[RMDB]
RNA sequence: GGGAACGACUCGAGUAGAGUCGAAAAGAUAUGGAAUUGACAGGGAGCUCAUGUGUCGGAAACGACACAUCGAGCGAGGAUCUGUAAUUCCUAAGUCAAAACGCGACUUUGUUCGCAAAGUCGCGAACCAUGUACGAAUGUUCGCAUUCGUACAUGGAAAAGAAACAACAACAACAAC
Reactivity to DMS in 0.01 (KOAc 150mM, MgCl2 10mM, bicine 150mM(pH8.5), 24C), signal-to-noise 2, nucleotides 027 to 126: g000a010u000a000u000g010g000a020a010u000u000g000a030c000a010g010g010g020a010g020c000u000c000a020u000g000u000g030u000c000g030g010a000a010a020c010g010a020c010a010c000a000u010c210g020a000g020c010g020a030g010g010a010u050c000u020g000u000a000a000u000u010c000c000u000a000a080g000u000c000a090a050a120a170c040g000c000g010a020c000u000u030u000g020u000u020c280g030c040a000a010a000g000u000c020g040c010g010a050a080
Reactivity to 2A3 in 0.01 (KOAc 150mM, MgCl2 10mM, bicine 150mM(pH8.5), 24C), signal-to-noise 2, nucleotides 027 to 126: g000a000u010a000u050g000g010a010a020u010u050g200a130c000a010g010g000g030a010g020c010u020c000a010u010g000u000g000u000c010g000g010a000a000a000c020g000a000c020a000c000a020u040c080g000a010g000c000g000a010g000g000a000u000c000u000g000u010a010a000u000u000c000c010u000a000a000g010u000c020a000a090a030a090c020g000c010g000a000c010u010u030u020g030u110u110c090g010c230a010a010a000g010u000c000g020c010g000a030a030
An RNA of 177 nucleotides, treated with DMS and 2A3 and read out base by base. The reactions ran in a buffer of 150 mM KOAc, 10 mM MgCl2 and 150 mM bicine (pH 8.5), at 24 C. For 2A3, 11,555 sequencing reads were counted. The DMS profile rests on 4,049 reads. In probing experiments dimethyl sulfate is read out at A N1 and C N3, which are open when not base-paired.